[RMDB]
RNA sequence: GGGAACGACUCGAGUAGAGUCGAAAAGUCCUAGCGAAAAGCUAGGACAAGUGCAUCGCUAGACAGAUCGUCGAAAAGACGAUCGGAUGCACAUGUCUAGUCAAAAGUCGAGGAGAACUCGACAAAAGACUAGCCUAUUAUUCGUAAUAGGCUAGUCAAAAGAAACAACAACAACAAC
Reactivity to DMS in 0.01 (KOAc 150mM, MgCl2 10mM, bicine 150mM(pH8.5), 24C), signal-to-noise 5, nucleotides 027 to 126: g000u000c000c000u000a020g020c010g020a110a090a090a130g000c000u000a010g010g000a000c000a000a020g010u010g010c010a010u000c010g010c160u030a090g020a110c170a220g000a010u000c000g040u000c010g000a090a060a090a140g020a030c000g000a000u000c000g030g000a000u000g000c000a020c030a120u040g000u010c050u000a140g000u050c120a070a080a090a130g010u010c000g000a000g010g000a210g010a100a150c000u000c000g010a000c000a020a020a060a100
Reactivity to 2A3 in 0.01 (KOAc 150mM, MgCl2 10mM, bicine 150mM(pH8.5), 24C), signal-to-noise 8, nucleotides 027 to 126: g000u010c000c000u000a000g010c020g070a220a140a100a000g000c000u000a000g000g000a000c000a010a010g000u000g000c010a000u000c020g040c180u090a050g050a130c050a060g000a000u000c000g040u000c000g050a170a140a120a060g000a000c000g000a000u000c000g020g000a010u010g020c000a000c000a010u060g050u000c050u060a080g100u090c050a040a050a030a030g000u000c000g000a000g010g030a180g060a300a230c000u000c000g000a010c000a000a000a000a020